Structure probing data (2A3) for a 207-nucleotide construct. The 2A3 profile rests on 979 reads. 2A3 adducts were read by reverse transcription with SuperScript II with manganese. Reactivities are given for positions 27 through 156.
RNA sequence: GGGAACGACUCGAGUAGAGUCGAAAAACGAGGCCGUGCCUACUACGGUAGGCAGGGCCUCGAAUUACGUUCAUCUACUUAAUCGUAGACGCAUCAAUACAUCAUUCAUGGAACGGGGGAUGGUGAAACUAGAAUCAAACGUUCGCGUUUGAUUCAACGAAAGUCCUUGGUUCGCCAAGGACUUUCGAAAAGAAACAACAACAACAAC
Reactivity to 2A3 in 0.01 (KOAc 150mM, MgCl2 10mM, bicine 150mM(pH8.5), 24C), signal-to-noise 2, nucleotides 027 to 156: a000c000g000a000g010g040c010c130g180u000g000c010c000u010a000c010u010a010c190g160g000u000a010g000g000c000a000g000g000g000c000c000u000c000g000a000a000u030u060a000c000g000u000u030c000a010u000c040u010a010c010u040u200a150a070u280c050g000u000a010g020a010c010g000c010a080u200c070a080a130u120a240c010a020u000c000a000u000u000c000a000u030g070g010a000a040c010g000g000g000g000g000a000u000g000g030u010g000a080a000a010c120u140a070g000a000a000u000c010a000a000a030c000g040u080u050c220g000c010g180u000u030u000g000a010u000u000c000a010a000
The reactions ran in a buffer of 150 mM KOAc, 10 mM MgCl2 and 150 mM bicine (pH 8.5), at 24 C.